[RMDB]
RNA sequence: GGGAACGACUCGAGUAGAGUCGAAAAGAUGUUCGCUGAUUCGUCAGCCGCAUGCCCAGGUGGCCGCGAUCUUCAAGGCUACGGCGCGGAUAGGUCCGCGCUGAUCGUUUUCCUCCAACGAAGCUAUAAAAGGAACGAAGGUUCGCCUUCGUUCCAAGUAGUAGUUGAGCUUCGGCUCAACUACUACAAAAGAAACAACAACAACAAC
Reactivity to 2A3 in 0.01 (KOAc 150mM, MgCl2 10mM, bicine 150mM(pH8.5), 24C), signal-to-noise 2, nucleotides 027 to 156: g080a010u040g020u140u300c100g000c000u000g000a030u040u090c190g010u040c140a000g000c020c030g000c000a010u080g000c010c020c020a020g040g010u010g000g000c010c020g090c100g030a010u000c010u040u030c000a010a010g000g000c000u000a010c020g000g010c010g000c010g000g000a030u160a180g170g150u040c000c000g010c000g000c020u000g000a000u010c000g000u030u030u070u150c000c020u100c060c010a060a110c090g110a100a050g070c070u110a040u110a300a120a070a030g000g000a000a000c000g000a000a010g030g000u010u070c110g040c020c000u000u000c000g000u000u000c000c000a000a000